This 177-nucleotide RNA was probed chemically with 2A3 and DMS. For DMS the reverse transcriptase was MarathonRT. The DMS profile rests on 2,286 reads. Values cover nucleotides 27 to 126.
[RMDB]
RNA sequence: GGGAACGACUCGAGUAGAGUCGAAAACGACUUACCUUCGGGUAAGUCGACAUAGGUGAGUUCAUCGGAUAGCUGCCUAGGUGAGUUCAUCGGAUAGCAGCCACAUGUAACGGUUCGCCGUUACAAAGUGUCCUUAAGGUUUCGACCUUAAGGACACAAAAGAAACAACAACAACAAC
Reactivity to 2A3 in 0.01 (KOAc 150mM, MgCl2 10mM, bicine 150mM(pH8.5), 24C), signal-to-noise 2, nucleotides 027 to 126: c000g010a000c000u000u000a000c000c000u010u100c250g090g000g000u000a000a000g000u000c000g010a000c010a040u170a040g050g010u050g020a040g000u050u010c020a010u030c080g070g010a090u050a130g070c100u090g060c080c040u080a130g000g010u020g020a040g010u040u000c020a010u020c050g000g060a060u110a040g100c040a020g060c030c010a080c030a100u110g000u000a010a000c010g020g040u060u060c250g040c100c010g000u010u000a010c000a000a030a000
Reactivity to DMS in 0.01 (KOAc 150mM, MgCl2 10mM, bicine 150mM(pH8.5), 24C), signal-to-noise 3, nucleotides 027 to 126: c030g010a020c000u010u000a000c000c000u010u020c220g020g010g020u000a000a000g010u000c000g010a040c140a070u000a100g030g000u000g010a020g010u000u000c030a030u000c050g010g010a140u000a110g010c060u010g010c020c030u010a190g000g010u000g010a080g000u000u000c010a030u010c030g020g000a140u000a090g020c080a070g000c040c050a070c200a120u000g000u000a000a010c000g000g000u000u000c220g010c000c010g010u000u000a020c010a000a040a070